[RMDB]
RNA sequence: GGGAACGACUCGAGUAGAGUCGAAAAGCAUACAACUUCGGUUGUAUGCAACGACAGAGUUGAGUGUCAUAAACAACGUAACAUGUGAGUUACAAUAACACAUUGCAGCAGCUUUCGAGCUGCUGAACAUAGACCCUAUCUUCGGAUAGGGUCUAUGAAAAGAAACAACAACAACAAC
Reactivity to DMS in 0.01 (KOAc 150mM, MgCl2 10mM, bicine 150mM(pH8.5), 24C), signal-to-noise 5, nucleotides 027 to 126: g000c000a010u000a000c020a000a010c000u000u020c250g030g010u000u000g010u000a000u010g010c010a020a050c120g000a050c060a060g010a120g010u000u010g010a090g000u000g010u000c040a110u000a070a070a120c130a090a070c130g020u000a030a020c040a140u020g010u000g010a140g010u000u010a030c070a090a120u010a070a040c120a050c110a080u000u010g010c010a010g000c020a000g010c010u000u000u000c130g000a020g010c000u000g010c000u000g010a020a090
Reactivity to 2A3 in 0.01 (KOAc 150mM, MgCl2 10mM, bicine 150mM(pH8.5), 24C), signal-to-noise 4, nucleotides 027 to 126: g010c000a000u000a000c000a010a010c000u050u080c170g100g020u000u000g000u000a000u000g000c000a000a000c020g000a000c020a040g100a050g150u110u170g120a110g080u090g040u040c040a070u150a070a140a020c030a050a030c080g020u030a000a020c020a030u130g130u090g300a120g050u040u040a020c030a010a080u150a080a040c090a000c030a110u090u300g050c000a000g000c000a000g010c000u050u050u140c190g060a010g000c000u000g000c000u000g000a000a000
Source: RMDB library M2PK50, as collected in RNAgym. Chemical mapping of a 177-nucleotide RNA with DMS and 2A3. The RNA was probed in 150 mM KOAc, 10 mM MgCl2 and 150 mM bicine (pH 8.5) at 24 C. DMS adducts were read by reverse transcription with MarathonRT. The 2A3 profile rests on 3,834 reads.